[RMDB]
RNA sequence: GGGAACGACUCGAGUAGAGUCGAAAAUCUGUAACGUUCGCGUUACAGAAAAGGGUAUGAGAGUACCAGAUCAGAUCAUCCCAGAUCAGGAAACACAUCAAAAAAGGGCCACGUUCGCGUGGCCCAAGGUCUUAAGAAAGUUCGCUUUCUUAAGACCAAAAGAAACAACAACAACAAC
Reactivity to DMS in 0.01 (KOAc 150mM, MgCl2 10mM, bicine 150mM(pH8.5), 24C), signal-to-noise 2, nucleotides 027 to 126: u010c000u020g000u000a030a010c000g010u000u010c250g040c000g020u000u000a000c000a000g010a010a040a100a110g000g020g020u000a010u000g020a230g000a250g040u000a010c020c000a200g000a080u010c090a080g000a040u000c020a050u000c010c020c000a050g000a010u000c000a130g010g000a080a050a090c070a050c110a050u040c090a000a050a080a060a120a120g000g000g030c000c010a010c000g040u010u000c200g010c000g100u010g010g000c000c020c000a000a010
Structure probing data (DMS) for a 177-nucleotide construct. For DMS, 1,788 sequencing reads were counted. The RNA was probed in 150 mM KOAc, 10 mM MgCl2 and 150 mM bicine (pH 8.5) at 24 C. For DMS the reverse transcriptase was MarathonRT.